[RMDB]
RNA sequence: GGGAACGACUCGAGUAGAGUCGAAAACGUCAACCGACAUUUGACUUGGUCAUGUGGGGGUUCCUUUGUUUUUUCCAACGGUCAGGGACCUGUUGCCGCUUGAGGCAGUCUUAUAUGAUUGGAAACCGUCUAUUGACGUGUUCGCAUGUCGAUAGACAAAAGAAACAACAACAACAAC
Reactivity to DMS in 0.01 (KOAc 150mM, MgCl2 10mM, bicine 150mM(pH8.5), 24C), signal-to-noise 9, nucleotides 027 to 126: c150g000u030c090a090a100c100c070g010a050c040a060u020u010u010g000a030c020u020u020g030g010u010c030a020u010g010u010g010g010g000g000g010u000u000c010c010u010u010u010g000u000u000u000u000u010u000c050c060a060a040c040g010g000u010c100a130g010g010g000a020c020c020u030g020u020u010g010c000c000g010c210u030u030g010a100g010g020c000a040g000u020c010u010u040a090u020a050u020g000a060u000u000g000g000a050a060a120c260c110
Reactivity to 2A3 in 0.01 (KOAc 150mM, MgCl2 10mM, bicine 150mM(pH8.5), 24C), signal-to-noise 9, nucleotides 027 to 126: c070g070u060c040a100a090c060c040g060a020c030a040u070u050u070g020a020c010u060u150g100g020u090c030a050u070g010u080g020g030g000g000g000u010u010c000c000u040u040u060g070u020u050u020u010u050u050c050c030a040a020c040g040g060u090c060a070g040g000g020a010c000c020u050g110u090u120g040c010c010g050c070u050u110g030a100g040g080c000a000g000u000c000u030u090a180u050a060u180g200a300u030u050g030g020a060a050a040c050c050
The record gives the reactivity of an RNA of 177 nucleotides to DMS and 2A3. The 2A3 profile rests on 76,324 reads. The RNA was probed in 150 mM KOAc, 10 mM MgCl2 and 150 mM bicine (pH 8.5) at 24 C. Source: RMDB library OK1LIB, as collected in RNAgym.